An RNA of 207 nucleotides, treated with 2A3 and DMS and read out base by base. The data come from the RNA Mapping Database (RMDB), library OK3TST. High DMS reactivity at an A or C suggests that its Watson-Crick edge is free. DMS adducts were read by reverse transcription with MarathonRT. For 2A3 the reverse transcriptase was SuperScript II with manganese. Conditions: 150 mM KOAc, 10 mM MgCl2 and 150 mM bicine (pH 8.5), 24 C.

RNA sequence: GGGAACGACUCGAGUAGAGUCGAAAAUGGACUCUGGCCUAAUGGUUUUUAUGGAGUCAGAUAACUAUUCACGGGACUUAUCUUCAUUGAACACAUGCUGGGGAGAAAAAUAAUAGCAGGAUACAGGAAACAUUAUCUGCUUCAGAUUCAAAAAUUGGACUAACUAUACAUUCGUGUAUAGUUAGUCAAAAGAAACAACAACAACAAC
Reactivity to 2A3 in 0.01 (KOAc 150mM, MgCl2 10mM, bicine 150mM(pH8.5), 24C), signal-to-noise 5, nucleotides 027 to 156: u050g020g020a020c040u020c020u040g040g010c010c020u120a110a110u120g020g020u060u070u020u050u120a090u060g010g000a010g020u010c010a000g010a040u120a060a030c060u070a090u160u120c050a020c060g040g000g050a040c020u070u090a030u140c000u050u020c030a070u030u090g070a080a000c020a000c010a080u060g010c010u020g000g000g030g020a040g080a010a070a010a010a000u180a040a030u050a050g040c010a010g040g030a020u060a070c020a020g070g000a070a040a020c010a030u060u080a030u070c010u030g030c000u040u040c000a010g060a110u070u100c030a030a040a070a070a190u300u300g050
Reactivity to DMS in 0.01 (KOAc 150mM, MgCl2 10mM, bicine 150mM(pH8.5), 24C), signal-to-noise 3, nucleotides 027 to 156: u000g040g010a110c030u000c020u010g010g000c020c040u000a050a120u010g010g020u020u000u000u000u010a120u040g040g020a090g010u000c040a080g000a120u000a050a100c070u000a100u010u010c090a100c070g000g050g000a100c040u000u010a060u000c030u000u020c050a180u000u000g010a070a070c030a060c050a080u010g020c070u000g000g070g030g010a080g020a000a060a050a070a090u000a050a090u010a080g020c040a020g000g010a110u010a080c070a070g010g010a130a040a110c040a100u000u010a040u010c040u000g010c020u000u020c040a050g000a180u000u000c060a040a030a090a090a210u010u000g010
For 2A3, 2,965 sequencing reads were counted.